[RMDB]
RNA sequence: GGGAACGACUCGAGUAGAGUCGAAAAGACUUCCCUAUUCUCUCACGCUCUUUUCUUUUUGUGCAGCGGCGGGUGGGUUCCCAGGGUAAAACACAAUUGGUGUUUCCCGGUAACACCGUGCGGUUCCUGUGGUUCGCCCCGCCAAAGCAUAUAAUUAGUAUCAAUUAGUGUUCGCACUAAUUGAUACAAAAGAAACAACAACAACAAC
Reactivity to 2A3 in 0.01 (KOAc 150mM, MgCl2 10mM, bicine 150mM(pH8.5), 24C), signal-to-noise 3, nucleotides 027 to 156: g110a050c070u040u050c000c000c030u020a150u160u060c080u050c030u070c010a050c060g110c030u050c050u070u040u060u080c030u020u190u060u130u090g030u050g040c060a010g010c040g090g020c100g020g120g050u210g110g100g020u070u120c020c020c030a030g020g020g010u050a010a020a070a030c100a020c020a160a270u230u150g120g000u010g020u010u030u060c010c040c000g000g020u030a020a000c020a040c010c020g070u120g030c060g000g050u010u010c000c000u090g030u150g060g050u030u010c020g150c010c010c070c000g000c000c030a020a020a000g010c000a000u020a000u000a030a010u050u090a040
This 207-nucleotide RNA was probed chemically with 2A3. For 2A3 the reverse transcriptase was SuperScript II with manganese.